[RMDB]
RNA sequence: GGGAACGACUCGAGUAGAGUCGAAAACGGAUCAACUUCGGUUGAUCCGAAAGGGACGGGUCGGGAGGCGGAUACUCGCGGUCCCAAGAAGAAUCCAGACUGAAAGGAAGGUCUUCGGACCUUCCAAUCUUUUAAGUAUGUUCGCAUACUUAAAAGAAAAAGAAACAACAACAACAAC
Reactivity to 2A3 in 0.01 (KOAc 150mM, MgCl2 10mM, bicine 150mM(pH8.5), 24C), signal-to-noise 4, nucleotides 027 to 126: c000g000g010a010u000c000a010a000c010u040u040c150g120g000u000u000g000a000u000c000c000g010a020a010a000g020g000g030a030c040g030g020g090u110c040g010g050g020a020g020g030c100g070g040a070u100a160c020u020c020g080c010g030g020u040c000c000c010a010a030g090a020a010g050a020a040u040c020c010a030g090a130c080u140g100a130a070a060g000g000a000a000g000g010u000c010u020u040c140g050g000a000c000c000u000u010c000c000a010a000
Reactivity to DMS in 0.01 (KOAc 150mM, MgCl2 10mM, bicine 150mM(pH8.5), 24C), signal-to-noise 6, nucleotides 027 to 126: c020g010g000a010u000c000a000a000c010u000u010c170g020g010u000u010g000a000u000c000c000g010a010a050a100g010g010g010a050c050g020g020g030u010c040g000g010g010a090g010g000c080g010g000a100u010a070c040u000c020g010c030g000g000u000c000c000c010a060a060g010a110a080g010a110a080u000c020c030a130g000a120c140u000g010a080a110a130g000g010a010a010g000g000u000c000u000u010c190g020g000a010c000c000u010u000c000c000a020a020